[RMDB]
RNA sequence: GGGAACGACUCGAGUAGAGUCGAAAACAUAAUACACCACCUCCAUACAUUUUACUGUUCCUGUUAUAAUAGUGACAGGUAUAGAAAAACGUAUUGUAUAGUUGUACAGUUCCUAUUAUGCGUAUCACGUUAUUCACCAAUUCGUUGGUGAAUAACGAAAAGAAACAACAACAACAAC
Reactivity to 2A3 in 0.01 (KOAc 150mM, MgCl2 10mM, bicine 150mM(pH8.5), 24C), signal-to-noise 9, nucleotides 027 to 126: c020a050u150a080a050u080a090c030a030c030c000a050c010c020u010c030c000a020u010a030c010a030u030u040u020u050a100c010u010g020u030u020c000c000u010g010u010u020a100u030a300a300u170a160g130u050g020a000c000a000g000g020u000a000u010a010g080a010a020a000a020a010c030g000u030a030u030u100g030u020a030u050a150g050u030u070g020u040a060c020a090g000u030u020c000c000u020a070u160u080a060u130g080c080g060u080a050u120c030a020
Reactivity to DMS in 0.01 (KOAc 150mM, MgCl2 10mM, bicine 150mM(pH8.5), 24C), signal-to-noise 5, nucleotides 027 to 126: c070a050u000a060a050u010a060c040a060c080c070a140c060c010u010c040c050a050u010a010c010a050u000u000u000u000a120c000u000g010u000u000c010c000u000g020u000u000a090u000a080a150u050a150g010u010g010a000c000a000g000g000u000a020u000a020g000a090a020a010a020a030c080g010u010a030u000u010g010u000a070u010a090g010u000u000g020u000a060c140a070g010u000u000c000c010u000a060u010u010a050u010g000c110g000u010a090u020c140a140